[RMDB]
RNA sequence: GGGAACGACUCGAGUAGAGUCGAAAAGAUAUGGAGGGACAGGUAGACAUGCUCGUGGGUCGGAAACGACCUAAACGAGCAACAGCUACUGUCCCUCCUAAGUCAAAAGUCCAGGUUCGCCUGGACAGAUCAUUGCCUCGUUCGCGAGGCAAUGAUCAAAAGAAACAACAACAACAAC
Reactivity to DMS in 0.01 (KOAc 150mM, MgCl2 10mM, bicine 150mM(pH8.5), 24C), signal-to-noise 1, nucleotides 027 to 126: g000a090u000a300u000g000g000a000g000g010g000a000c000a110g000g000u060a010g030a100c110a130u000g020c000u000c000g080u000g000g010g000u000c010g030g000a060a000a140c040g020a010c000c010u000a000a050a050c010g010a000g040c000a010a030c150a190g000c020u000a010c000u000g000u000c000c000c000u000c000c000u000a040a050g000u000c010a040a100a180a100g030u000c000c010a030g000g000u000u010c220g040c010c000u000g030g000a000c020a030
The record gives the reactivity of an RNA of 177 nucleotides to DMS. For DMS, 1,055 sequencing reads were counted. Conditions: 150 mM KOAc, 10 mM MgCl2 and 150 mM bicine (pH 8.5), 24 C. Source: RMDB library TTRDES, as collected in RNAgym.